Conditions: 150 mM KOAc, 10 mM MgCl2 and 150 mM bicine (pH 8.5), 24 C. The record gives the reactivity of an RNA of 207 nucleotides to 2A3. For 2A3 the reverse transcriptase was SuperScript II with manganese. Source: RMDB library RNAMAK, as collected in RNAgym.
RNA sequence: GGGAACGACUCGAGUAGAGUCGAAAAGGGGUCGGUCCCUAAGACAGUAAGCGACAUGCUCAUACUGAAGCCUCCACGGUAUAGAGCAACAGCGCUUAUCGAGGGACCGACGGAGGCACCCAAAAGUGUACCUCAUGCUUCGGCAUGAGGUACACAAGCAUGAAUACCAGUUCGCUGGUAUUCAUGCAAAAGAAACAACAACAACAAC
Reactivity to 2A3 in 0.01 (KOAc 150mM, MgCl2 10mM, bicine 150mM(pH8.5), 24C), signal-to-noise 2, nucleotides 027 to 156: g030g050g080g010u010c000g000g030u000c000c000c000u030a110a030g010a040c060a060g050u020a010a000g010c000g080a130c070a110u180g000c000u000c000a000u000a000c000u030g040a090a030g020c000c000u000c000c010a000c010g010g000u000a020u050a090g020a000g030c030a070a040c050a090g080c010g000c010u010u010a020u100c040g000a050g000g000g000a010c000c000g000a000c000g000g010a000g000g000c000a030c010c000c020a030a070a040a020g010u000g000u000a000c000c000u010c000a000u000g000c020u060u180c250g050g000c000a010u010g000a000g010g000u000a000c000a000c000a010a000